[RMDB]
RNA sequence: GGGAACGACUCGAGUAGAGUCGAAAAUGUGGUGACAGGGAGCGACCGCCUGCUCCACGACGAGGGGAUCCCGCACGAGGGGUGCUCCUCCGGCGGGGGUGUGGUGGAGGUGGCGCUGGAUGGCCGGGUUCGUGUACAAUUUCGAUUGUACACGAACAAAAGAAACAACAACAACAAC
Reactivity to 2A3 in 0.01 (KOAc 150mM, MgCl2 10mM, bicine 150mM(pH8.5), 24C), signal-to-noise 2, nucleotides 027 to 126: u150g070u050g000g000u030g070a080c030a030g040g060g030a030g030c030g080a220c000c030g020c000c010u090g060c000u050c010c000a030c010g040a020c060g000a080g050g050g000g020a030u020c010c020c010g030c060a200c110g060a090g000g040g020g010u120g190c040u080c010c020u010c010c020g020g000c030g030g030g030g010g010u100g020u030g000g050u040g000g060a020g000g000u030g000g000c030g000c010u010g050g000a050u020g020g010c050c000g090g000
Reactivity to DMS in 0.01 (KOAc 150mM, MgCl2 10mM, bicine 150mM(pH8.5), 24C), signal-to-noise 2, nucleotides 027 to 126: u010g010u000g000g010u000g020a150c060a060g010g000g000a090g000c040g020a150c010c030g020c010c010u000g010c020u000c000c010a030c000g000a100c220g010a070g000g000g000g010a090u000c000c000c000g000c140a140c250g010a110g020g010g010g000u010g010c130u010c000c000u000c000c080g010g000c140g000g010g000g000g030u010g010u010g020g010u010g000g000a100g000g010u000g000g010c040g010c010u000g000g040a160u000g010g020c010c020g010g010